[RMDB]
An RNA of 207 nucleotides, treated with 2A3 and DMS and read out base by base. The data come from the RNA Mapping Database (RMDB), library RNAMAK. DMS adducts were read by reverse transcription with MarathonRT. The 2A3 profile rests on 13,019 reads. The DMS profile rests on 8,760 reads. The RNA was probed in 150 mM KOAc, 10 mM MgCl2 and 150 mM bicine (pH 8.5) at 24 C.
RNA sequence: GGGAACGACUCGAGUAGAGUCGAAAAUCAGGUGAUUCGUCACCUGAAAAAAACCUUUGUGCCUACCGCUUAGCAACAGCCUAGACGUACCCAUUGGGUACUCUAGGACAUGCUAAUGUAGGCACUCUGGUAAAAAACGCAGACUUCGGUCUGCGAAUCAUACACUUAUGUUCGCAUAAGUGUAUGAAAAAGAAACAACAACAACAAC
Reactivity to 2A3 in 0.01 (KOAc 150mM, MgCl2 10mM, bicine 150mM(pH8.5), 24C), signal-to-noise 7, nucleotides 027 to 156: u030c000a000g010g010u010g010a040u040u130c210g050u030c130a000c000c000u000g010a040a000a000a000a000a000a010c010c000u020u000u000g000u000g000c000c000u000a000c000c000g000c030u000u000a000g000c000a020a180c080a140g040c000c000u010a010g010a030c160g030u000a000c000c020c110a300u260u300g010g000g000u000a000c000u000c000u000a000g000g010a010c000a020u010g000c000u000a000a000u160g000u000a000g000g000c000a000c000u000c000u000g000g010u070a100a080a030a020a000a010c010g000c000a000g000a000c000u080u140c270g130g000u010c000u000g000c000g000a000a020
Reactivity to DMS in 0.01 (KOAc 150mM, MgCl2 10mM, bicine 150mM(pH8.5), 24C), signal-to-noise 3, nucleotides 027 to 156: u000c010a010g010g030u020g010a050u000u010c300g030u000c010a010c010c000u020g000a010a000a050a110a050a080a020c010c020u000u000u000g010u000g020c000c000u000a020c010c030g060c090u000u010a020g020c010a040a100c130a210g010c020c010u010a020g030a070c190g000u000a000c010c020c000a300u000u000g070g020g020u000a000c000u000c000u010a010g020g020a010c060a140u010g020c000u000a100a010u000g020u000a010g000g030c010a000c000u000c010u000g000g020u010a000a040a060a060a060a120c010g020c000a020g000a020c000u000u000c290g040g000u000c000u010g030c000g000a000a030